[RMDB]
RNA sequence: GGGAACGACUCGAGUAGAGUCGAAAAAGGGAGGCGGUGGCGCCCACGGAACAGCCGCGUCUAAUUGGCUGAGCGCGGAGCCGCCCGGUGAUUGGUGGGGGCGGAAGGGGGCCGGGCGCCAGCGCUGCUAAGUACCCCGCUUCGGCGGGGUACUUAGAAAAGAAACAACAACAACAAC
Reactivity to 2A3 in 0.01 (KOAc 150mM, MgCl2 10mM, bicine 150mM(pH8.5), 24C), signal-to-noise 2, nucleotides 027 to 126: a000g110g000g010a070g010g000c040g130g160u000g010g010c010g010c000c020c020a020c060g030g000a080a060c050a090g020c000c000g000c010g030u040c020u060a150a200u170u180g180g010c090u050g140a050g070c060g030c000g010g000a000g020c000c010g000c020c000c010g060g040u110g000a220u140u170g120g100u150g040g130g000g000g000c010g000g100a000a070g130g020g020g080g000c040c010g040g000g000c000g000c010c000a000g000c000g000c010u060g030